[RMDB]
RNA sequence: GGGAACGACUCGAGUAGAGUCGAAAAUAGGGCUGUCAUGGUGAGAGCUGUUCAGGCAAUGAAAGCAAACCCGAUGUCUCUGCAGGAUGGACGCUCGCCAGAGUACACUUCGGAAAUCGAAGGAAGACAACAAGUUACCCUUCGGGGUAACUUGUUGAAAAGAAACAACAACAACAAC
Reactivity to 2A3 in 0.01 (KOAc 150mM, MgCl2 10mM, bicine 150mM(pH8.5), 24C), signal-to-noise 3, nucleotides 027 to 126: u110a030g020g020g010c010u030g040u100c070a070u080g090g000u100g010a220g000a010g020c040u050g060u060u050c020a020g040g060c030a030a200u170g080a160a060a050g020c050a080a040a100c000c000c000g010a050u140g060u050c010u020c020u110g020c010a050g020g030a040u070g070g020a040c030g010c020u020c000g030c010c000a020g010a030g080u050a030c090a050c050u010u000c000g050g060a100a170a150u230c020g010a020a000g010g030a050a020g080a040
Reactivity to DMS in 0.01 (KOAc 150mM, MgCl2 10mM, bicine 150mM(pH8.5), 24C), signal-to-noise 2, nucleotides 027 to 126: u040a050g000g000g020c040u010g000u000c060a060u030g020g010u020g000a050g000a160g020c020u030g000u010u010c070a090g010g020c030a060a050u040g000a060a040a060g030c100a060a070a170c080c020c010g000a030u030g020u020c010u000c020u000g000c070a060g000g010a090u010g030g000a100c100g010c050u000c000g000c000c050a040g010a070g000u000a070c040a160c010u000u000c000g010g000a130a070a150u010c010g010a020a000g000g010a110a210g000a150

Conditions: 150 mM KOAc, 10 mM MgCl2 and 150 mM bicine (pH 8.5), 24 C. This 177-nucleotide RNA was probed chemically with 2A3 and DMS. 2A3 adducts were read by reverse transcription with SuperScript II with manganese. For 2A3, 2,404 sequencing reads were counted.